[RMDB]
RNA sequence: GGGAACGACUCGAGUAGAGUCGAAAAAAAGGGAGGAUCGGAUGGGAAAAGUAAAUCCUAUGGGAAUCCCUGGUUCCCCCUGACGUCCAGCCCCUCCCCGGUCCGAGAGAAGGGGGACUCCGGAACGCAGUAUAGCUUACUUCGGUAAGCUAUACUGAAAAGAAACAACAACAACAAC
Reactivity to 2A3 in 0.01 (KOAc 150mM, MgCl2 10mM, bicine 150mM(pH8.5), 24C), signal-to-noise 1, nucleotides 027 to 126: a020a010a030g000g000g000a030g000g000a010u040c040g050g030a000u080g070g010g040a140a190a050a090g130u170a060a080a140u050c000c020u010a070u120g080g010g020a060a100u010c010c000c030u000g000g020u010u020c000c000c000c000c020u050g090a160c090g110u020c040c060a070g030c030c000c000c000u010c000c000c000c000g000g000u000c000c000g190a210g000a000g000a160a180g000g000g020g000g020a010c000u000c010c020g020g000a010a020c030g000
Reactivity to DMS in 0.01 (KOAc 150mM, MgCl2 10mM, bicine 150mM(pH8.5), 24C), signal-to-noise 3, nucleotides 027 to 126: a010a060a050g000g000g000a070g020g000a130u020c070g020g010a090u000g010g010g000a030a050a100a120g020u020a070a080a100u010c010c000u010a090u010g000g010g030a300a080u010c030c010c000u000g000g010u000u000c010c010c000c060c030u000g000a090c200g000u000c040c020a080g010c060c000c020c010u000c030c010c000c010g000g010u010c010c010g010a150g000a020g010a070a060g000g000g000g010g010a230c010u000c000c030g000g000a010a030c040g000